[RMDB]
Background:
The record gives the reactivity of an RNA of 177 nucleotides to DMS and 2A3. Reactivities are given for positions 27 through 126. DMS adducts were read by reverse transcription with MarathonRT. For 2A3, 1,143 sequencing reads were counted. The reactions ran in a buffer of 150 mM KOAc, 10 mM MgCl2 and 150 mM bicine (pH 8.5), at 24 C.
RNA sequence: GGGAACGACUCGAGUAGAGUCGAAAAGGCACAGACACCGUGCGUGAAGAGGAAGAUGACAACGAUGUUUGUUUCAACGGCGGUGACGAUGGAGAGAUGUUGUCAAGUAAUUCUUUCCGCGAUGGAGCAGCUACUGCAUGUUCGCAUGCAGUAGCUGAAAAGAAACAACAACAACAAC
Reactivity to DMS in 0.01 (KOAc 150mM, MgCl2 10mM, bicine 150mM(pH8.5), 24C), signal-to-noise 2, nucleotides 027 to 126: g000g000c060a160c030a180g050a240c060a120c000c070g000u050g010c030g020u020g020a110a130g000a090g020g040a110a140g010a110u000g030a070c010a060a030c080g030a070u000g040u010u000u000g100u060u010u010c130a040a050c060g000g050c110g000g030u000g000a000c020g000a090u010g000g000a020g000a000g020a080u000g020u000u000g000u000c110a020a150g000u000a040a070u010u000c000u000u000u020c000c060g000c150g030a140u030g020g020a090g010
Reactivity to 2A3 in 0.01 (KOAc 150mM, MgCl2 10mM, bicine 150mM(pH8.5), 24C), signal-to-noise 3, nucleotides 027 to 126: g010g000c040a010c000a080g150a010c000a000c040c070g080u090g080c040g000u110g090a020a120g000a080g160g060a070a070g020a140u200g040a020c030a090a000c070g030a040u240g120u020u050u020g090u020u000u060c010a070a020c000g010g000c000g070g000u000g030a000c020g020a000u060g040g020a010g020a000g010a110u130g010u040u000g020u080c010a130a020g040u090a050a020u070u050c000u020u050u010c000c000g070c040g080a090u210g030g000a020g140